[RMDB]
Chemical mapping of a 177-nucleotide RNA with DMS and 2A3.
For DMS the reverse transcriptase was MarathonRT.
It was measured as part of the RMDB library TTRDES.
Reactivities are given for positions 27 through 126.
The DMS profile rests on 4,423 reads.
For 2A3 the reverse transcriptase was SuperScript II with manganese.
RNA sequence: GGGAACGACUCGAGUAGAGUCGAAAAGAUAUGGAUGUAUUGUUCGAUAAGACCCAAUCGGAAACGAUUGAAGGUCUUUUGACGAACUGUACAUCCUAAGUCAAAGCACAUGCUUCGGCAUGUGCAACUUGAGGGAUAACUUCGGUUAUCCCUCAAGAAAAGAAACAACAACAACAAC
Reactivity to DMS in 0.01 (KOAc 150mM, MgCl2 10mM, bicine 150mM(pH8.5), 24C), signal-to-noise 3, nucleotides 027 to 126: g000a030u000a120u000g010g020a000u000g000u000a010u000u000g000u010u000c020g020a170u020a020a010g010a000c000c000c010a000a010u010c000g010g000a030a020a080c010g010a000u000u000g010a170a160g010g000u000c000u010u000u000u000g010a210c100g010a010a010c000u000g000u000a000c000a000u000c010c000u000a000a060g010u000c020a110a140a140g010c000a000c000a000u000g010c000u000u010c220g030g010c000a000u010g000u010g000c000a010a030
Reactivity to 2A3 in 0.01 (KOAc 150mM, MgCl2 10mM, bicine 150mM(pH8.5), 24C), signal-to-noise 3, nucleotides 027 to 126: g000a010u020a000u040g000g000a000u010g000u010a000u030u060g020u000u020c050g070a230u060a300a000g000a000c000c010c000a000a000u000c010g010g000a050a020a000c020g020a010u010u070g100a270a100g040g030u040c030u030u020u020u130g240a140c010g000a000a000c010u020g010u010a000c020a000u000c000c000u000a010a010g020u000c050a120a160a010g000c000a000c010a010u030g000c020u110u140c300g140g000c000a000u010g010u000g000c010a000a000